Source: RMDB library RSTRND, as collected in RNAgym. The record gives the reactivity of an RNA of 207 nucleotides to 2A3. Values cover nucleotides 27 to 156.

RNA sequence: GGGAACGACUCGAGUAGAGUCGAAAAAGGGGGACGUCCUCGUAAAAACGUCACCUAAAGAUAACUGGCAAACAAAACUACGCUUUAGCUGCCUAAUUGCUGCAGCUAGCUCCUCCCGCCAUCGCCCGCGUGGCGUUCGAGGGGCUCAUAUGAAGCGCUGACUAUCUGUGUUCGCACAGAUAGUCAGAAAAGAAACAACAACAACAAC
Reactivity to 2A3 in 0.01 (KOAc 150mM, MgCl2 10mM, bicine 150mM(pH8.5), 24C), signal-to-noise 3, nucleotides 027 to 156: a000g000g010g010g010g010a010c000g030u060c000c060u130c060g160u180a070a040a030a000a000c000g000u000c020a030c020c000u060a080a080a030g090a070u210a160a050c110u170g140g000c050a080a040a000c040a070a120a140a030c090u100a030c040g000c000u030u060u040a010g000c010u010g010c000c030u170a250a300u150u160g110c190u060g000c040a000g000c000u000a010g000c000u000c010c000u000c000c000c010g000c000c010a020u070c040g080c020c040c000g020c010g010u020g000g000c000g010u070u130c020g010a000g010g000g020g020c010u020c000a120u150a040u290g030a010a000g000c010g000
2A3 adducts were read by reverse transcription with SuperScript II with manganese. The 2A3 profile rests on 1,324 reads.